The data come from the RNA Mapping Database (RMDB), library OK2TRN. Structure probing data (DMS and 2A3) for a 177-nucleotide construct. The DMS profile rests on 2,251 reads. Reactivities are given for positions 27 through 126. Reactivities are rounded to 0.1 and cut off at 0 and 3.
RNA sequence: GGGAACGACUCGAGUAGAGUCGAAAAACGUAUCACCGAAGCUGUGGGUGGACACCAUCAGGUGUCCGCGGUAGGAGAGCGUUCUAAGUGCAUCGAAGUCAGACCGCAAGGACUGGUGGAGCGCUUACGUAUGUUCUCGGUUCGCCGAGAACAUACGAAAAGAAACAACAACAACAAC
Reactivity to DMS in 0.01 (KOAc 150mM, MgCl2 10mM, bicine 150mM(pH8.5), 24C), signal-to-noise 3, nucleotides 027 to 126: a060c050g000u000a090u000c020a110c030c020g010a180a170g040c070u000g020u000g000g020g030u020g020g010a040c010a020c000c000a160u020c300a140g030g040u000g030u000c000c000g010c040g020g000u010a090g000g000a100g000a030g020c020g010u020u000c030u010a020a050g000u000g000c010a200u000c100g000a130a130g020u000c020a020g010a150c020c040g000c300a070a130g000g010a100c000u000g010g020u000g000g000a030g000c000g020c000u000u000a050
Reactivity to 2A3 in 0.01 (KOAc 150mM, MgCl2 10mM, bicine 150mM(pH8.5), 24C), signal-to-noise 1, nucleotides 027 to 126: a020c220g020u250a300u130c020a030c040c020g040a120a040g090c080u100g110u160g240g090g060u070g030g050a000c010a000c000c000a080u300c160a150g010g000u000g020u000c020c000g020c020g000g010u050a040g000g000a020g000a000g000c010g000u010u000c010u040a020a030g010u010g000c020a160u180c150g050a020a010g010u000c000a000g020a060c010c020g000c060a050a080g040g010a010c000u000g010g000u060g040g000a020g000c020g020c000u000u040a040